[RMDB]
An RNA of 177 nucleotides, treated with DMS and 2A3 and read out base by base. Values cover nucleotides 27 to 126. Source: RMDB library OK1LIB, as collected in RNAgym.
RNA sequence: GGGAACGACUCGAGUAGAGUCGAAAAGUCUGAGGCUGGCAGACGUCCAGUUGGAAUCAGCUGUAAGCAGACGGGAAGCGAAAGUGCAAACUGAAGAGAAGCCAGAUUCACUGCAAGUGAUAGGGCGUCAACGAUAGAUUUUCGAAUCUAUCGUUGAAAAAGAAACAACAACAACAAC
Reactivity to DMS in 0.01 (KOAc 150mM, MgCl2 10mM, bicine 150mM(pH8.5), 24C), signal-to-noise 9, nucleotides 027 to 126: g000u010c010u010g000a090g010g000c010u000g000g000c020a020g010a040c040g010u010c020c010a070g010u020u010g000g000a100a110u010c010a040g010c010u010g010u020a070a110g010c060a050g000a110c070g000g000g000a120a120g000c040g010a060a070a090g010u010g010c080a050a080a100c000u010g000a110a100g010a100g010a090a130g000c020c010a070g000a130u030u000c010a030c010u010g000c220a080a100g020u000g000a020u000a080g000g000g000c010g010
Reactivity to 2A3 in 0.01 (KOAc 150mM, MgCl2 10mM, bicine 150mM(pH8.5), 24C), signal-to-noise 7, nucleotides 027 to 126: g010u000c010u000g010a010g020g010c010u000g000g010c010a020g010a030c010g020u020c000c000a030g020u050u070g060g050a040a060u060c000a000g000c000u020g020u060a070a050g040c020a000g020a050c020g010g000g070a060a010g030c040g070a120a050a030g110u100g000c020a020a020a030c010u040g020a080a000g030a030g020a130a000g000c000c010a020g010a080u040u030c010a000c010u100g060c120a130a040g010u000g010a010u030a030g060g010g000c000g010
2A3 adducts were read by reverse transcription with SuperScript II with manganese.